[RMDB]
RNA sequence: GGGAACGACUCGAGUAGAGUCGAAAACUGUGACUUGCCUCCUUUAUCGUGGCUUGGGAGCAGGGAGGUUGAGGUACUACAAGGUGCAGGAAUUUGAGCUUCUGGCCAGGUGGCCCUGCCCCUCCACACCCUUUCCUGGUUUCGACCAGGAAAGGGUAAAAGAAACAACAACAACAAC
Reactivity to DMS in 0.01 (KOAc 150mM, MgCl2 10mM, bicine 150mM(pH8.5), 24C), signal-to-noise 1, nucleotides 027 to 126: c100u000g000u010g000a090c050u000u000g000c020c000u000c050c050u010u020u000a080u020c150g020u000g020g000c300u000u000g000g010g020a090g010c080a050g020g000g000a070g000g000u000u010g010a030g010g010u000a070c080u020a040c040a050a090g000g020u000g010c020a010g020g030a100a050u000u010u000g020a210g000c070u000u000c090u010g000g020c010c010a110g000g010u000g010g000c130c000c000u010g000c000c030c000c030u000c010c020a060c070
Reactivity to 2A3 in 0.01 (KOAc 150mM, MgCl2 10mM, bicine 150mM(pH8.5), 24C), signal-to-noise 1, nucleotides 027 to 126: c000u020g060u080g090a000c030u020u050g000c030c000u050c050c010u060u250u090a140u170c020g050u030g030g060c020u030u220g050g030g000a180g000c030a010g000g010g010a010g070g000u050u230g080a040g000g060u090a080c020u000a030c060a120a000g080g010u010g210c000a020g030g080a100a120u120u110u170g080a070g020c000u050u000c030u090g010g000c010c000a000g000g000u040g080g000c030c000c060u030g020c000c000c000c020u000c040c000a030c010
The data come from the RNA Mapping Database (RMDB), library OK2TST. Chemical mapping of a 177-nucleotide RNA with DMS and 2A3. The reactions ran in a buffer of 150 mM KOAc, 10 mM MgCl2 and 150 mM bicine (pH 8.5), at 24 C. The 2A3 profile rests on 887 reads.